[RMDB]
RNA sequence: GGGAACGACUCGAGUAGAGUCGAAAAAUCUGUCAGAACCAUCUGAUAAGGCUAAAUACUCCUAGAAGACCGAUAGUGGACUAGUACCGUGAGGGAAAGGUGAAAAGUACCCUGAAUAAGGGAGUGAGUUUGACUAGUUAUUCGUAACUAGUCAAACAAAAGAAACAACAACAACAAC
Reactivity to 2A3 in 0.01 (KOAc 150mM, MgCl2 10mM, bicine 150mM(pH8.5), 24C), signal-to-noise 6, nucleotides 027 to 126: a000u010c010u010g000u000c000a010g020a070a100c050c020a190u090c020u000g020a020u050a170a120g030g000c010u030a030a070a060u090a100c020u050c010c000u030a080g080a140a030g060a150c020c030g060a060u100a110g110u150g060g030a030c040u040a020g020u040a060c010c050g040u070g070a090g000g050g040a050a060a000g070g020u100g060a050a020a050a010g050u090a110c000c000c010u030g030a080a060u130a100a020g010g030g000a000g020u070g010a050
Reactivity to DMS in 0.01 (KOAc 150mM, MgCl2 10mM, bicine 150mM(pH8.5), 24C), signal-to-noise 9, nucleotides 027 to 126: a150u010c020u000g020u010c010a020g000a070a170c260c190a130u010c000u000g000a030u000a060a050g000g010c070u000a080a090a070u030a130c090u000c010c010u010a070g020a100a080g000a110c050c030g000a100u010a060g010u010g000g000a100c060u010a070g010u010a120c030c050g010u020g010a100g010g000g000a040a060a070g000g000u010g000a040a060a050a090g000u020a090c010c000c000u000g010a090a060u030a110a070g000g000g000a100g020u010g010a150
Source: RMDB libraries RFM100 and RFMREP, as collected in RNAgym. The record gives the reactivity of an RNA of 177 nucleotides to 2A3 and DMS. Values cover nucleotides 27 to 126. The RNA was probed in 150 mM KOAc, 10 mM MgCl2 and 150 mM bicine (pH 8.5) at 24 C.